[RMDB]
RNA sequence: GGGAACGACUCGAGUAGAGUCGAAAAGAUAUGGAGUAUUAGUCAGUGUGAACUACUCUAUCUCGGAAACGAGUAAGGAGCACACUGAAUUUACUCCUAAGUCAAAACAUGGAGUUCGCUCCAUGAACCAUAUAGAUGUCUUCGGACAUCUAUAUGGAAAAGAAACAACAACAACAAC
Reactivity to DMS in 0.01 (KOAc 150mM, MgCl2 10mM, bicine 150mM(pH8.5), 24C), signal-to-noise 8, nucleotides 027 to 126: g000a040u000a300u000g000g000a020g010u000a010u000u000a050g010u000c000a020g010u000g000u000g010a060a050c070u020a300c000u000c010u010a300u010c000u000c000g000g000a110a080a200c010g000a010g010u020a120a170g000g020a020g000c010a010c010a010c000u000g000a010a020u000u000u000a000c000u000c000c000u000a030a090g010u010c040a090a080a090a210c010a000u000g000g010a030g020u000u010c270g020c000u000c000c000a000u010g000a080a180
Reactivity to 2A3 in 0.01 (KOAc 150mM, MgCl2 10mM, bicine 150mM(pH8.5), 24C), signal-to-noise 9, nucleotides 027 to 126: g030a010u060a050u170g010g000a010g010u030a040u240u090a110g090u070c010a000g000u010g010u010g040a090a090c050u180a130c000u300c010u030a140u070c010u000c010g030g040a100a090a050c010g000a000g020u060a280a300g050g000a010g000c000a000c000a000c000u000g000a000a010u000u000u000a000c000u000c010c000u020a130a020g050u020c040a020a010a100a180c010a010u010g010g010a010g020u100u140c200g090c150u000c000c000a000u000g010a010a050

The record gives the reactivity of an RNA of 177 nucleotides to DMS and 2A3. For 2A3 the reverse transcriptase was SuperScript II with manganese. Reactivities are rounded to 0.1 and cut off at 0 and 3. The DMS profile rests on 10,015 reads. For 2A3, 27,917 sequencing reads were counted.